[RMDB]
Structure probing data (DMS and 2A3) for a 170-nucleotide construct. Conditions: 150 mM KOAc, 10 mM MgCl2 and 150 mM bicine (pH 8.5), 24 C. For DMS, 12,216 sequencing reads were counted. Source: RMDB library 15KLIB, as collected in RNAgym.

RNA sequence: GGGAACGACUCGAGUAGAGUCGAAAAGAGGGCACUCCGGGCCGUAGGGAAGAAAAGCACCCAGAGGGAGGAAGCCACACAGGGGUUUGCAGAGAAAUCACCUCCAGAGGACCCCUUCAGCGAACAGAUGCCUAGCACUUCGGUGCUAGGAAAAGAAACAACAACAACAAC
Reactivity to DMS in 0.01 (KOAc 150mM, MgCl2 10mM, bicine 150mM(pH8.5), 24C), signal-to-noise 5, nucleotides 027 to 129: g000a080g000g000g000c070a010c060u000c030c040g050g030g000c120c040g040u050a070g070g070g000a000a000g030a020a070a040a060g000c120a110c000c030c040a000g000a110g020g050g000a060g020g000a090a060g040c140c020a110c140a070c120a050g060g000g010g020u000u010u060g040c300a120g010a040g020a090a100a090u050c170a110c100c000u030c040c070a110g040a080g000g000a100c090c050c010c020u000u040c090a070g030c050g050a040a040c000a120g020a140u060g000
Reactivity to 2A3 in 0.01 (KOAc 150mM, MgCl2 10mM, bicine 150mM(pH8.5), 24C), signal-to-noise 4, nucleotides 027 to 129: g010a000g000g040g010c070a010c060u010c010c030g000g000g000c020c000g020u040a060g000g000g040a040a030g030a020a060a000a010g060c030a020c000c000c020a020g050a050g020g000g000a000g010g000a030a030g050c000c000a060c010a000c030a020g000g010g010g010u000u000u070g030c010a000g040a000g050a080a120a060u180c050a090c020c040u030c000c010a060g010a080g080g010a010c010c000c010c000u030u060c040a020g010c000g010a050a020c030a040g070a020u090g030